The data come from the RNA Mapping Database (RMDB), library TTRDES. The record gives the reactivity of an RNA of 177 nucleotides to 2A3 and DMS. The 2A3 profile rests on 7,909 reads. For DMS the reverse transcriptase was MarathonRT.
RNA sequence: GGGAACGACUCGAGUAGAGUCGAAAAGAUAUGGAUCAUACCAGGGAGCUAUCCAUCGGAAACGAUGGGUUAGCAUCGAUCUGGACGUGAUCCUAAGUCAAACAUUCCGCGGUUCGCCGCGGAAUGACAAAACGAAAUUCUUCGGAAUUUCGUUUUGAAAAGAAACAACAACAACAAC
Reactivity to 2A3 in 0.01 (KOAc 150mM, MgCl2 10mM, bicine 150mM(pH8.5), 24C), signal-to-noise 3, nucleotides 027 to 126: g020a000u030a020u090g000g000a010u000c010a030u040a130c000c010a000g040g000g060a070g000c010u020a010u020c000c010a000u000c000g000g000a020a020a000c000g000a000u020g090g000g000u050u250a000g000c000a030u300c030g020a070u020c000u010g030g150a300c220g060u040g000a000u000c010c000u000a020a010g030u000c050a120a080a040c000a020u000u000c010c000g020c050g000g000u100u120c300g060c130c020g000c000g000g000a010a000u000g000a000
Reactivity to DMS in 0.01 (KOAc 150mM, MgCl2 10mM, bicine 150mM(pH8.5), 24C), signal-to-noise 5, nucleotides 027 to 126: g000a010u000a180u010g000g000a020u010c010a050u010a130c010c000a010g020g010g000a050g020c010u000a020u000c000c000a000u010c000g010g000a060a050a080c000g010a000u000g000g000g020u020u000a000g020c000a270u010c230g010a060u010c010u000g000g010a100c250g010u000g000a010u000c000c010u010a000a090g010u010c010a200a150a300c000a010u000u000c000c000g010c000g010g010u000u010c300g020c010c000g000c000g000g000a000a000u000g000a160